[RMDB]
RNA sequence: GGGAACGACUCGAGUAGAGUCGAAAAUGGUCAUUGUAUUGGCAGUCUUGGCCUCCCUGGGUCCCAAGGCACUCUUCGGCUUUGUUGCUGCCUGAAUUUGAACCGAACAUACACACUAGGUCCGACGAUCAUGCAGUACCUUCGGGUACUGCAUGAUAAAAGAAACAACAACAACAAC
Reactivity to DMS in 0.01 (KOAc 150mM, MgCl2 10mM, bicine 150mM(pH8.5), 24C), signal-to-noise 2, nucleotides 027 to 126: u000g010g010u000c030a040u010u010g000u010a110u020u010g010g020c020a090g010u010c030u010u000g000g010c040c020u000c080c040c040u010g000g000g000u000c040c030c060a070a060g020g010c100a100c100u010c040u000u000c120g000g000c060u000u010u000g000u010u020g010c020u000g000c030c010u010g010a090a100u000u000u000g010a080a120c030c010g000a060a120c080a100u000a080c130a050c130a060c060u000a100g010g020u000c020c020g000a120c200g000

The record gives the reactivity of an RNA of 177 nucleotides to DMS. In probing experiments dimethyl sulfate is read out at A N1 and C N3, which are open when not base-paired. For DMS, 1,234 sequencing reads were counted. The reactions ran in a buffer of 150 mM KOAc, 10 mM MgCl2 and 150 mM bicine (pH 8.5), at 24 C. It was measured as part of the RMDB library OK2TST.